Notes
An RNA of 177 nucleotides, treated with 2A3 and DMS and read out base by base.
[RMDB]
RNA sequence: GGGAACGACUCGAGUAGAGUCGAAAAUCGUCAGCUACGGACCGCUGUCGAGUCGGCAAAAGAGCAGGUACGGGCAAAGAUUGACGUAGACCUGGAAGGCGCAGCAGCGGCUCGCGCCAAGAUGCGGUCCUACGAAGUAUUUCGAUACUUCGUAGGAAAAAGAAACAACAACAACAAC
Reactivity to 2A3 in 0.01 (KOAc 150mM, MgCl2 10mM, bicine 150mM(pH8.5), 24C), signal-to-noise 7, nucleotides 027 to 126: u070c000g030u020c010a020g000c010u090a100c050g030g010a020c010c010g010c020u030g030u050c010g030a070g160u120c030g010g030c030a090a120a070a030g160a050g040c090a070g020g020u030a020c030g000g060g000c020a030a060a070g170a160u090u120g000a000c010g000u020a030g070a090c000c000u020g090g060a140a080g030g000c010g000c010a020g000c000a020g150c050g300g000c030u020c050g010c000g000c000c010a020a010g070a040u160g040c060g030g030
Reactivity to DMS in 0.01 (KOAc 150mM, MgCl2 10mM, bicine 150mM(pH8.5), 24C), signal-to-noise 9, nucleotides 027 to 126: u010c020g020u010c030a080g020c030u000a130c060g010g000a050c040c030g010c010u000g020u000c040g010a080g020u000c030g020g010c080a060a070a100a130g010a110g010c020a070g020g010u000a030c040g000g000g010c040a090a090a100g010a170u010u000g000a050c030g010u000a090g010a100c020c000u000g010g010a120a110g000g010c010g010c020a050g010c030a170g010c160g010g010c010u000c150g030c070g010c010c020a040a040g010a080u000g020c080g010g010

2A3 adducts were read by reverse transcription with SuperScript II with manganese. The reactions ran in a buffer of 150 mM KOAc, 10 mM MgCl2 and 150 mM bicine (pH 8.5), at 24 C. Reactivities are given for positions 27 through 126.